Description:
Chemical mapping of a 207-nucleotide RNA with DMS and 2A3. For 2A3 the reverse transcriptase was SuperScript II with manganese. The DMS profile rests on 4,884 reads. DMS adducts were read by reverse transcription with MarathonRT.
RNA sequence: GGGAACGACUCGAGUAGAGUCGAAAAUAGCGAAGUAGGAUUUUAUGCGUCAAGUGUUCACAGGCUGGGGAGUCGCCGUGAAACGAAAAGCAGAAAGCGUGCUGCUUACGAUCUAAUUUCCGCACCCAUAAGAAGUCUCUGUUCGCAGAGACUUCAACUAAUAGCGUAACUUCGGUUACGCUAUUAGAAAAGAAACAACAACAACAAC
Reactivity to DMS in 0.01 (KOAc 150mM, MgCl2 10mM, bicine 150mM(pH8.5), 24C), signal-to-noise 2, nucleotides 027 to 156: u000a100g000c050g000a050a080g030u020a160g000g010a080u000u020u000u000a040u010g020c020g020u010c070a080a290g020u000g030u000u000c030a010c040a120g020g020c020u000g070g040g000g020a120g010u000c030g010c020c010g020u000g020a030a010a070c010g010a120a050a030a070g010c000a050g000a070a040a060g030c100g000u010g040c040u000g010c020u000u000a050c060g010a040u010c050u000a070a150u000u000u000c000c010g000c030a140c010c000c010a140u020a080a150g020a020a030g010u000c000u000c000u000g030u000u000c290g030c010a000g000a030g010a020c000u000u000c000a030a120
Reactivity to 2A3 in 0.01 (KOAc 150mM, MgCl2 10mM, bicine 150mM(pH8.5), 24C), signal-to-noise 7, nucleotides 027 to 156: u150a010g020c030g040a050a010g040u110a060g020g050a040u040u040u050u080a100u160g030c030g010u040c060a080a070g030u070g060u230u020c020a010c070a090g030g020c030u120g050g000g010g040a060g100u090c020g000c010c010g010u020g010a020a000a010c020g020a060a050a050a000g020c010a000g070a080a110a010g120c080g060u110g040c010u010g000c000u030u020a030c030g010a010u020c000u090a070a030u020u020u020c010c000g000c030a050c000c020c000a040u090a100a090g000a000a000g010u000c000u000c000u010g040u040u080c250g000c070a000g000a000g000a000c000u000u000c000a000a000
The reactions ran in a buffer of 150 mM KOAc, 10 mM MgCl2 and 150 mM bicine (pH 8.5), at 24 C.